The record gives the reactivity of an RNA of 177 nucleotides to 2A3 and DMS. Values cover nucleotides 27 to 126. For DMS the reverse transcriptase was MarathonRT. 2A3 adducts were read by reverse transcription with SuperScript II with manganese.
[RMDB]
RNA sequence: GGGAACGACUCGAGUAGAGUCGAAAAGAUAUGGACCGUGUACCAACUUCAACAGCUCGGAAACGAGACAUGAAGGGUACCGGUCCUAAGUCAAACCCAUACCGUACCUUCGGGUACGGUAUGGGAACGCUAAGCAAUACUUCGGUAUUGCUUAGCGAAAAGAAACAACAACAACAAC
Reactivity to 2A3 in 0.01 (KOAc 150mM, MgCl2 10mM, bicine 150mM(pH8.5), 24C), signal-to-noise 4, nucleotides 027 to 126: g020a030u060a050u100g000g030a010c020c060g060u100g000u230a000c050c060a300a300c240u010u010c010a090a140c040a220g090c000u000c000g030g010a040a090a080c010g020a000g040a090c020a100u140g010a000a000g020g020g000u010a010c000c000g000g000u000c000c000u000a010a020g000u000c010a030a030a110c000c000c000a000u010a000c000c000g000u010a000c000c000u060u130c300g120g000g000u000a010c000g010g000u000a000u000g000g000g000a010a010
Reactivity to DMS in 0.01 (KOAc 150mM, MgCl2 10mM, bicine 150mM(pH8.5), 24C), signal-to-noise 3, nucleotides 027 to 126: g000a020u010a300u000g000g010a010c000c000g010u000g030u000a000c010c000a130a190c000u010u000c000a020a110c300a120g000c010u000c000g000g000a110a040a170c010g010a010g000a080c140a130u000g000a000a000g010g000g010u020a000c010c000g000g000u000c000c000u000a000a020g000u000c030a090a150a100c000c000c000a000u000a000c010c010g000u000a000c010c000u010u020c300g020g010g010u000a000c000g000g000u000a010u000g000g000g010a010a000